RNA sequence: GGGAACGACUCGAGUAGAGUCGAAAAGGGCGUCAUUUCGAUGACGCCCAUACGUCUACUCCGAUUGGCGAGGACGACGCCGACGCGCGCGUUUGCCAAUCGCACCGUCCAGAUUCGUCUGGACGAAACACACAGUUCUGUUCGCAGAACUGUGUGUAAAAGAAACAACAACAACAAC
Reactivity to 2A3 in 0.01 (KOAc 150mM, MgCl2 10mM, bicine 150mM(pH8.5), 24C), signal-to-noise 3, nucleotides 027 to 126: g000g010g000c010g010u010c010a020u050u070u130c200g090a030u020g010a000c000g000c000c000c000a000u010a000c010g020u000c010u000a000c000u010c000c000g010a010u000u010g010g000c060g030a080g110g050a070c030g070a170c000g010c010c030g300a300c140g060c010g000c000g000c010g040u000u010u090g000c010c000a000a000u010c000g000c020a060c010c030g000u000c000c000a000g010a030u030u090c120g080u000c090u010g000g000a000c000g000a010a020
Reactivity to DMS in 0.01 (KOAc 150mM, MgCl2 10mM, bicine 150mM(pH8.5), 24C), signal-to-noise 2, nucleotides 027 to 126: g000g000g020c000g030u000c000a000u000u010u010c170g010a020u000g010a000c010g000c000c000c000a000u000a010c300g000u000c000u000a010c010u000c020c000g010a010u000u000g000g000c000g010a110g010g010a030c010g020a070c010g020c000c050g030a140c260g020c060g010c030g000c020g000u010u010u000g000c000c000a010a000u000c000g000c070a070c220c000g020u000c000c000a010g000a050u000u020c160g000u000c000u000g000g000a000c000g010a030a070